Notes:
The data come from the RNA Mapping Database (RMDB), library RSTRND. The record gives the reactivity of an RNA of 207 nucleotides to DMS and 2A3.
[RMDB]
RNA sequence: GGGAACGACUCGAGUAGAGUCGAAAAUGGAUUUGACAUGCAUAAGGUUUAUUAGACUGCAGUACUAUGGUAGAGUAUAAGACCACUAGGCUUUUUCAAACGGAAAAGAAAAACAAUUAGAAGUUUCUCCUUUAUUAAUGAGUUCUUCACAAUCAAACUUAUAUAGCGUGUUCGCACGCUAUAUAAGAAAAGAAACAACAACAACAAC
Reactivity to DMS in 0.01 (KOAc 150mM, MgCl2 10mM, bicine 150mM(pH8.5), 24C), signal-to-noise 2, nucleotides 027 to 156: u010g050g110a060u010u000u000g010a100c110a090u000g000c010a050u000a110a120g010g020u020u000u000a110u000u000a050g030a180c070u000g000c050a080g000u010a070c030u000a090u000g000g030u000a070g000a110g010u000a120u010a090a060g050a050c100c020a070c080u010a070g000g000c020u000u000u020u000u030c050a050a110a210c120g020g020a040a020a040a080g000a030a010a050a090a060c010a050a140u010u000a160g000a090a200g000u020u000u000c060u010c020c020u000u000u000a160u110u000a050a070u010g000a300g000u000u010c020u000u000c050a110c040a030a050u000c050a090a100a190
Reactivity to 2A3 in 0.01 (KOAc 150mM, MgCl2 10mM, bicine 150mM(pH8.5), 24C), signal-to-noise 3, nucleotides 027 to 156: u100g010g020a030u070u050u050g040a030c020a030u060g000c020a030u070a100a050g040g010u030u040u120a100u040u050a050g040a080c030u050g020c020a030g040u090a060c030u080a050u060g070g010u060a040g010a020g090u070a030u020a180a030g030a020c000c010a020c030u020a030g040g030c010u040u020u040u050u100c070a120a130a030c040g020g020a070a040a000a010g040a030a080a040a030a000c000a020a020u090u100a080g010a090a000g030u010u080u040c040u050c000c000u120u130u110a110u080u080a120a110u110g020a000g030u030u020c010u040u030c050a020c050a070a060u080c050a050a030a050